[RMDB]
RNA sequence: GGGAACGACUCGAGUAGAGUCGAAAAAUAUAAAUUUGCGUGUUUCAUUAUGAAGCAAGUCAAGUUUAAUGAUCUUGUAAAAAACAUUAAAGUACAAAUAAAUGCAAGCAAUAUAGUUUCAUUUAGUUCAAAACGUUUAGUCUCUUUUGCAUAAGCACACAAGUAAAAUCUUCGGAUUUUACUUGUGAAAAGAAACAACAACAACAAC
Reactivity to 2A3 in 0.01 (KOAc 150mM, MgCl2 10mM, bicine 150mM(pH8.5), 24C), signal-to-noise 1, nucleotides 027 to 156: a000u170a000u070a050a140a050u090u080u120g050c060g000u020g020u030u070u020c050a060u050u260a130u300g030a000a000g000c010a010a000g010u060c000a000a000g010u050u030u050a000a000u000g000a010u040c010u000u040g050u050a010a010a010a010a010a010c010a010u030u030a170a040a000g070u080a040c000a040a060a050u040a060a100a010u070g020c000a040a020g030c000a020a020u120a000u010a300g040u000u000u210c010a030u020u010u080a000g030u030u080c040a120a070a000a000c040g000u010u050u190a050g050u000c000u000c000u100u060u010u050g000c040a090u070a270a180g010c010a000
Chemical mapping of a 207-nucleotide RNA with 2A3. High 2A3 reactivity points to a flexible backbone, as in loops and unpaired stretches. Conditions: 150 mM KOAc, 10 mM MgCl2 and 150 mM bicine (pH 8.5), 24 C. It was measured as part of the RMDB library ARCHII.